[RMDB]
RNA sequence: GGGAACGACUCGAGUAGAGUCGAAAACAGAUGCCGUUCGCGGCAUCUGAAAGUGACGGUGAAAAAUGGCCAAGGUGCCAGCUUCCACCGACACAGGGCGCAAAAGAGGAUUCUUCGGAAUCCUCAAUCAAAGUUAUAAGUUCGCUUAUAACUUUGAAAAAGAAACAACAACAACAAC
Reactivity to 2A3 in 0.01 (KOAc 150mM, MgCl2 10mM, bicine 150mM(pH8.5), 24C), signal-to-noise 5, nucleotides 027 to 126: c000a000g000a000u000g000c020c000g020u050u070c260g010c010g100g000c000a000u000c000u000g010a030a020a010g000u010g010a010c010g000g000u010g020a010a010a000a020a040u010g010g010c030c080a280a200g230g040u300g050c000c000a000g010c010u020u020c020c010a000c000c000g010a010c000a000c010a000g080g070g020c140g000c090a030a090a060a030g010a010g000g000a000u000u020c020u050u080c230g020g000a020a000u000c000c010u000c000a000a000
Reactivity to DMS in 0.01 (KOAc 150mM, MgCl2 10mM, bicine 150mM(pH8.5), 24C), signal-to-noise 7, nucleotides 027 to 126: c010a010g010a010u000g010c000c010g030u000u010c200g020c010g020g020c000a000u000c000u000g000a020a070a070g010u000g000a120c010g020g010u010g000a010a010a010a120a210u000g000g010c000c010a220a180g020g010u010g020c000c010a010g010c230u000u000c020c000a010c010c000g000a090c010a010c010a160g010g000g020c110g020c180a060a060a090a080g000a010g010g010a020u000u000c000u000u010c160g020g000a020a010u000c000c000u000c000a010a040